[RMDB]
RNA sequence: GGGAACGACUCGAGUAGAGUCGAAAAUUUGUGAGGGUGAGGCGUGUCAGUGUAUGCGGAUACAUUAACUUGAAGGGGAGAUCAUAGUGGUGUGGUCCGCCUCUUGUUUUUGGCCAAACCUUGCGAGCUAUAUUAAAAUUUUCGAAUUUUAAUAUAGAAAAGAAACAACAACAACAAC
Reactivity to 2A3 in 0.01 (KOAc 150mM, MgCl2 10mM, bicine 150mM(pH8.5), 24C), signal-to-noise 2, nucleotides 027 to 126: u030u030u050g000u000g030a020g020g050g160u050g030a000g020g000c010g030u050g020u030c020a030g050u000g030u110a070u120g060c000g050g020a020u020a040c010a000u030u030a090a020c000u010u020g050a040a050g010g050g010g020a140g010a060u000c020a030u020a030g070u080g170g050u070g010u010g050g030u000c000c000g130c030c000u000c000u000u000g030u040u060u010u070u160g140g000c000c000a010a040a000c000c000u000u020g000c000g000a030g030
Reactivity to DMS in 0.01 (KOAc 150mM, MgCl2 10mM, bicine 150mM(pH8.5), 24C), signal-to-noise 2, nucleotides 027 to 126: u020u010u010g010u000g010a030g010g000g040u020g000a300g010g010c020g020u020g020u010c030a100g010u010g020u010a020u020g010c150g010g000a040u010a090c020a010u010u000a040a020c020u000u010g000a030a020g030g020g000g020a180g010a030u010c020a010u010a020g020u020g020g030u020g010u000g000g030u020c010c060g000c000c020u000c010u000u000g000u020u000u030u020u020g030g000c040c030a020a220a070c010c020u000u010g020c020g010a050g000
The record gives the reactivity of an RNA of 177 nucleotides to 2A3 and DMS. Values cover nucleotides 27 to 126. The RNA was probed in 150 mM KOAc, 10 mM MgCl2 and 150 mM bicine (pH 8.5) at 24 C.